[RMDB]
RNA sequence: GGGAACGACUCGAGUAGAGUCGAAAAACAACGCCGUGGCUGAGCACUACGCCGCCGUGGCGUCGCAGCACGGCGUCGCGGAAGACGACAUCGGGGUUAAGUUUGACACGCGCAACUUUAGACUGGGAUUCGACCCCCGUAUCGGUCUCAAUACCGACUUGAAUCAUUAAUUCGUUAAUGAUUCAAGAAAAGAAACAACAACAACAAC
Reactivity to DMS in 0.01 (KOAc 150mM, MgCl2 10mM, bicine 150mM(pH8.5), 24C), signal-to-noise 2, nucleotides 027 to 156: a060c020a040a010c000g000c000c000g050u000g000g020c010u000g010a120g040c180a090c020u000a020c000g030c040c160g000c200c070g020u000g020g020c000g000u010c030g030c000a020g000c020a230c000g000g020c000g040u000c000g000c030g010g030a150a130g000a090c030g000a070c050a090u000c080g000g020g040g000u000u020a040a080g010u000u030u010g010a160c040a070c060g040c020g020c080a060a090c110u000u010u010a090g010a140c040u000g000g000g030a180u000u000c040g010a160c030c010c010c010c030g060u000a050u000c010g000g010u000c050u000c070a100a110u000a150c020c010g000a130
Reactivity to 2A3 in 0.01 (KOAc 150mM, MgCl2 10mM, bicine 150mM(pH8.5), 24C), signal-to-noise 6, nucleotides 027 to 156: a000c030a010a020c000g010c010c010g020u020g180g070c030u030g020a090g130c100a050c110u070a010c030g010c020c010g100c070c110g230u240g010g000c000g000u010c000g000c010a010g010c010a000c020g000g000c010g000u000c000g010c010g030g020a070a030g040a050c050g010a020c020a110u080c040g010g000g000g010u050u110a090a040g030u040u090u130g100a070c070a030c100g090c010g000c030a050a080c050u120u110u120a080g030a070c050u080g040g010g060a110u090u110c040g040a060c000c020c000c020c000g000u050a070u040c030g020g010u000c030u010c080a050a080u140a120c020c020g000a020